Structure probing data (2A3 and DMS) for a 177-nucleotide construct. Reactivities are rounded to 0.1 and cut off at 0 and 3. For DMS the reverse transcriptase was MarathonRT.
RNA sequence: GGGAACGACUCGAGUAGAGUCGAAAAGAUUCGCUGCUACGGGCUGGGGCUGACAAAGUCGCCGUCAACACGGCCGCCAUCGCUUGCCCGGACUUGCUGGCGGACAUGGCGAGGCAGUUCGGCUCGCCUCCUGAAGGUAAUUCGUUACCUUCAGGAGAAAAGAAACAACAACAACAAC
Reactivity to 2A3 in 0.01 (KOAc 150mM, MgCl2 10mM, bicine 150mM(pH8.5), 24C), signal-to-noise 9, nucleotides 027 to 126: g040a220u050u040c020g000c060u050g000c020u050a020c020g010g010g000c020u060g030g000g050g020c030u050g030a080c100a050a170a020g050u070c030g010c030c010g040u040c050a060a060c070a010c070g030g000c010c010g010c030c010a090u120c050g010c100u030u060g010c020c050c000g040g020a070c070u050u100g010c040u070g030g000c000g000g000a020c030a070u120g020g000c010g010a020g040g020c030a040g060u090u100c040g030g010c000u000c010g020c010
Reactivity to DMS in 0.01 (KOAc 150mM, MgCl2 10mM, bicine 150mM(pH8.5), 24C), signal-to-noise 9, nucleotides 027 to 126: g000a170u000u000c020g010c030u000g010c040u000a150c030g000g010g010c020u000g010g010g000g010c060u000g010a050c100a080a110a140g010u000c130g010c020c010g010u000c150a090a120c220a090c040g010g000c010c050g010c040c040a040u010c080g000c030u000u000g010c010c020c030g000g000a090c140u010u000g010c030u000g010g000c000g010g000a040c070a080u010g000g010c020g000a060g000g000c030a100g000u000u010c080g010g000c010u000c020g000c060